[RMDB]
RNA sequence: GGGAACGACUCGAGUAGAGUCGAAAACCGAGCUCAUUAAGCGUGUCGGAGGGUUGUCUUCGUCAUCAACACACACAGUUUAUAAUAACUGGCAAAUCAAACAAUAAUUUCGCAGUAGCUGCCUAAUCGCACUCUGCAUCGCCUAACAGCAUUUCCUCACAAUAUGAGUCUUCGGACUCAUAUUGUGAAAAGAAACAACAACAACAAC
Reactivity to 2A3 in 0.01 (KOAc 150mM, MgCl2 10mM, bicine 150mM(pH8.5), 24C), signal-to-noise 6, nucleotides 027 to 156: c030c020g010a020g020c010u010c020a070u150u070a050a010g000c020g000u070g150u140c010g000g010a010g000g030g000u280u010g020u070c010u000u000c000g230u040c020a000u020c000a000a010c010a010c000a000c010a000c010a020g000u000u030u060a300u110a230a140u190a060a010c010u010g080g000c060a090a050a110u140c070a080a100a150c070a060a110u190a130a170u100u270u240c080g010c010a010g020u230a010g040c140u020g000c000c010u100a080a090u110c050g000c000a010c010u010c010u010g000c010a030u070c020g000c000c000u030a030a010c010a010g010c020a060u020u030u050c000c020u010